This 177-nucleotide RNA was probed chemically with 2A3 and DMS.
RNA sequence: GGGAACGACUCGAGUAGAGUCGAAAAGAUAUGGACGAUGCGGGCUUUUGACGCACACUCGGAAACGAGUGGCGAUAAGCCUACAUCGUCCUAAGUCAAAACCGUACUGAGUUCGCUCAGUACGGAAGACGUGACUAUAGUUCGCUAUAGUCACGUCAAAAGAAACAACAACAACAAC
Reactivity to 2A3 in 0.01 (KOAc 150mM, MgCl2 10mM, bicine 150mM(pH8.5), 24C), signal-to-noise 6, nucleotides 027 to 126: g030a010u060a040u090g010g000a010c010g010a000u010g010c080g020g010g030c040u160u160u140u270g180a130c020g000c040a210c010a000c290u000c000g010g010a040a060a040c010g000a000g010u010g000g000c000g000a000u020a090a040g000c010c000u000a010c000a000u000c000g000u000c000c000u000a000a000g010u010c000a000a010a060a130c010c000g000u000a010c010u000g000a010g020u090u140c230g130c120u000c000a000g000u000a000c000g000g000a000a010
Reactivity to DMS in 0.01 (KOAc 150mM, MgCl2 10mM, bicine 150mM(pH8.5), 24C), signal-to-noise 3, nucleotides 027 to 126: g000a040u000a300u000g000g010a010c000g000a010u000g010c000g020g010g000c000u000u000u010u010g000a210c080g010c000a110c000a000c000u000c000g000g000a090a060a160c000g000a020g010u000g010g000c000g000a090u000a010a020g000c000c000u000a030c000a020u000c000g010u000c000c000u000a000a070g000u000c010a090a090a070a160c000c000g010u010a000c000u000g000a020g000u000u010c230g010c000u000c000a010g010u000a000c000g010g000a020a040

DMS adducts were read by reverse transcription with MarathonRT. For 2A3, 17,271 sequencing reads were counted. Source: RMDB library TTRDEL, as collected in RNAgym. For DMS, 5,045 sequencing reads were counted. In probing experiments dimethyl sulfate is read out at A N1 and C N3, which are open when not base-paired.